[RMDB]
RNA sequence: GGGAACGACUCGAGUAGAGUCGAAAACAUUCUGGUCCACGAAGGGGUAUUAGCAGUCUGGACAUGUGGACAAGGCCAGCCUAAUUGCAGAAGGUUUGACCUUCAAGAAAAAGUUCAGAUAUCAUCACCCAGGAACAGGAUUCGUCCUGUUCCUGGGAAAAGAAACAACAACAACAAC
Reactivity to 2A3 in 0.01 (KOAc 150mM, MgCl2 10mM, bicine 150mM(pH8.5), 24C), signal-to-noise 2, nucleotides 027 to 126: c010a020u140u070c040u090g000g000u000c000c020a020c040g000a170a150g130g010g000g000u080a090u210u130a190g030c100a000g020u010c010u020g000g000a000c010a030u090g040u060g040g010a010c020a000a000g000g000c000c000a010g000c000c000u120a180a130u220u160g070c050a040g090a280a020g030g000u050u210u110g010a070c010c020u090u030c080a040a020g080a030a070a020a000a000g010u030u000c000a010g010a030u090a100u100c050a080u050c020a020
Reactivity to DMS in 0.01 (KOAc 150mM, MgCl2 10mM, bicine 150mM(pH8.5), 24C), signal-to-noise 2, nucleotides 027 to 126: c100a220u000u000c030u010g010g000u000c050c060a030c010g000a090a100g010g000g000g010u020a150u040u000a100g040c110a130g010u010c000u000g000g010a000c020a130u000g090u010g000g010a000c050a040a080g010g000c000c010a070g000c020c010u000a080a120u010u030g080c300a130g000a100a000g020g020u000u000u000g000a020c000c000u000u000c120a220a090g010a040a030a060a060a120g000u000u000c020a000g010a080u010a100u000c100a050u000c160a180